[RMDB]
RNA sequence: GGGAACGACUCGAGUAGAGUCGAAAAAGCAGGAGUACGCUCCUGCAUGGGAAGACGAAUUGACCCCAACUGAAGUUCAAUUCUAACGUUAAAAGGAGUUUUAUAUGACUGGACGUACGCGUCCAGAUGACGAUUUCAUUCUUCGGAAUGAAAUCAAGAGUAGGUUCUUGUUCGCAAGAACCUACUCAAAAGAAACAACAACAACAAC
Reactivity to 2A3 in 0.01 (KOAc 150mM, MgCl2 10mM, bicine 150mM(pH8.5), 24C), signal-to-noise 1, nucleotides 027 to 156: a000g010c020a030g000g010a020g020u060a030c190g050c140u010c000c020u030g000c000a000u000g010g000g020a100a140g280a000c070g000a000a000u000u010g000a010c000c000c000c000a020a100c230u270g040a030a020g000u080u030c020a000a000u010u000c000u070a150a040c060g080u100u240a020a010a050a040g220g010a110g040u030u090u120u060a230u080a070u140g140a080c000u000g000g000a000c000g000u030a000c200g030c020g040u010c000c000a000g000a010u030g050a020c060g000a000u000u000u000c000a000u020u000c000u030u020c060g030g000a000a000u010g010a000a000a000u000c000a000a000